[RMDB]
RNA sequence: GGGAACGACUCGAGUAGAGUCGAAAAGAAAGAAAGAAAGCGGUUGGGUGGGUCCAUCGCCCGUCGUGGCGUAUUCGGACGCUUUACCACGACGCGAGGAAAUAGCGAGACCGACCACCCCCUUUAACAGAGGUAUAGUAGUUCGCUACUAUACCAACAGUGAUGAAUUGUUCGCAAUUCAUCACUGAAAAGAAACAACAACAACAAC
Reactivity to DMS in 0.01 (KOAc 150mM, MgCl2 10mM, bicine 150mM(pH8.5), 24C), signal-to-noise 1, nucleotides 027 to 156: g000a160a060a160g000a190a030a200g000a130a120a070g030c070g010g010u000u010g010g010g000u000g010g020g000u010c020c070a080u000c040g000c000c000c030g020u000c020g030u000g030g000c000g010u000a090u010u030c090g000g010a090c090g010c110u000u000u000a040c030c000a010c020g020a010c000g010c010g030a070g010g010a050a130a180u000a070g010c040g020a190g000a120c060c000g030a030c020c020a100c000c000c000c050c010u000u010u010a110a210c110a180g000a150g000g010u000a010u010a020g000u000a030g010u000u010c300g020c000u000a010c000u000a010u010a000c000c010a010a030
Reactivity to 2A3 in 0.01 (KOAc 150mM, MgCl2 10mM, bicine 150mM(pH8.5), 24C), signal-to-noise 2, nucleotides 027 to 156: g050a000a040a010g050a040a110a000g050a050a100a030g130c180g060g070u170u120g100g000g030u050g070g030g010u060c020c030a060u020c010g000c000c000c000g000u010c010g010u010g000g000c060g010u100a160u140u210c070g130g040a010c050g010c030u080u100u060a070c020c000a010c020g000a010c010g050c130g040a020g000g090a080a300a100u080a080g010c000g000a010g040a020c020c020g050a050c010c000a020c000c000c000c000c030u000u060u080a110a050c110a030g070a020g090g000u000a000u000a010g000u000a000g000u030u040c120g000c100u000a000c000u010a000u000a000c010c000a000a000
Annotation
Source: RMDB library M2RFPK, as collected in RNAgym. Chemical mapping of a 207-nucleotide RNA with DMS and 2A3. The 2A3 profile rests on 1,652 reads. Reactivities are given for positions 27 through 156. The reactions ran in a buffer of 150 mM KOAc, 10 mM MgCl2 and 150 mM bicine (pH 8.5), at 24 C. DMS adducts were read by reverse transcription with MarathonRT. For DMS, 2,264 sequencing reads were counted.